[RMDB]
RNA sequence: GGGAACGACUCGAGUAGAGUCGAAAAGGUACGAGGAGAUAGAAAGGAAUCUGGGAUGCUGCUUAGGAGACUGGCUGGGGUGAGAAGAAUGAAAAUGGAAAGUAGAGUGGUUUACCAUCUCCUUCCAACAUCACAGGCAAUUCGUUGCCUGUGAUGUAAAAGAAACAACAACAACAAC
Reactivity to 2A3 in 0.01 (KOAc 150mM, MgCl2 10mM, bicine 150mM(pH8.5), 24C), signal-to-noise 1, nucleotides 027 to 126: g070g000u070a060c060g000a030g060g060a000g000a000u120a130g100a040a110a020g120g020a030a030u040c030u090g060g050g010a030u010g010c010u010g030c010u050u010a040g010g050a040g000a040c030u040g000g020c020u040g050g000g020g000u050g010a080g000a050a050g050a030a050u200g040a020a060a000a060u130g010g010a080a020a030g010u070a040g010a010g010u060g000g030u070u130u110a110c000c010a010u040c000u010c010c030u000u010c010c000a030
Reactivity to DMS in 0.01 (KOAc 150mM, MgCl2 10mM, bicine 150mM(pH8.5), 24C), signal-to-noise 2, nucleotides 027 to 126: g000g000u000a120c120g020a080g000g020a080g000a150u010a090g000a050a060a080g030g000a100a070u010c060u000g000g000g020a030u000g000c110u010g020c100u000u010a070g020g010a100g010a130c080u010g000g000c070u000g000g000g000g000u000g000a090g000a070a060g020a040a070u000g030a080a100a080a080u010g000g010a020a030a030g020u020a070g000a030g040u000g010g000u000u000u000a120c040c010a090u000c010u000c010c030u000u000c000c030a040
Record summary: An RNA of 177 nucleotides, treated with 2A3 and DMS and read out base by base. Conditions: 150 mM KOAc, 10 mM MgCl2 and 150 mM bicine (pH 8.5), 24 C.